[RMDB]
RNA sequence: GGGAACGACUCGAGUAGAGUCGAAAACAACGGCCGCCUGACCUUCGCCGAACUGGCCCGGCGCAUCAACCUGUCGCCCCCGGCGGUGGCCGACCGGGUGGCCAAGCUGGAGGCCGAAGGGGUGAUAAGUGAUACGGGAUUUCGAUCCCGUAUCACUAAAAGAAACAACAACAACAAC
Reactivity to DMS in 0.01 (KOAc 150mM, MgCl2 10mM, bicine 150mM(pH8.5), 24C), signal-to-noise 1, nucleotides 027 to 126: c050a110a190c100g010g120c020c030g000c050c010u010g000a150c080c030u000u000c120g030c010c030g000a150a140c210u020g010g010c010c080c090g000g000c040g030c140a020u020c060a030a120c020c010u000g000u000c080g000c020c000c060c030c000g000g000c120g030g030u020g010g010c030c000g030a040c050c040g020g030g050u010g010g000c000c000a080a180g050c010u010g030g010a120g000g000c000c050g000a100a050g020g030g020g010u000g030a080u030a110